Chemical mapping of a 177-nucleotide RNA with 2A3 and DMS. DMS adducts were read by reverse transcription with MarathonRT. The reactions ran in a buffer of 150 mM KOAc, 10 mM MgCl2 and 150 mM bicine (pH 8.5), at 24 C. It was measured as part of the RMDB library OK2TRN. The DMS profile rests on 1,351 reads.
RNA sequence: GGGAACGACUCGAGUAGAGUCGAAAAGUCUAGCGAUUUAGGGAUCCGAUCCGGGUCGCAGAACUCAACUGCAUGAGUAAACACGCAAGUCGCGUAUUGGCCGACCGCCCAAGGAUCUGCUAGACGAACGUAUGAUGGACUUCGGUCCAUCAUACGUAAAAGAAACAACAACAACAAC
Reactivity to 2A3 in 0.01 (KOAc 150mM, MgCl2 10mM, bicine 150mM(pH8.5), 24C), signal-to-noise 2, nucleotides 027 to 126: g000u000c000u020a000g000c020g040a080u040u020u160a070g010g040g030a030u050c050c030g020a050u050c070c080g190g000g000u000c010g000c000a010g060a040a020c000u000c030a060a100c040u280g040c100a140u060g040a010g050u060a000a150a020c060a000c010g010c050a040a130g270u210c070g030c000g010u040a100u050u120g150g000c080c030g020a040c010c000g050c000c000c020a040a070g030g000a010u010c070u110g000c010u020a010g000a010c000g000a000
Reactivity to DMS in 0.01 (KOAc 150mM, MgCl2 10mM, bicine 150mM(pH8.5), 24C), signal-to-noise 2, nucleotides 027 to 126: g000u000c010u000a000g050c020g030a100u000u000u010a280g010g010g000a160u000c120c050g000a080u000c090c080g000g000g000u000c010g000c060a070g030a090a090c040u000c030a050a070c170u000g010c180a140u010g030a060g000u000a060a070a110c140a020c000g000c050a070a100g000u030c240g020c040g000u000a060u010u010g030g000c150c020g000a020c010c040g000c030c010c030a090a160g000g010a000u000c000u020g040c010u010a020g010a010c010g000a030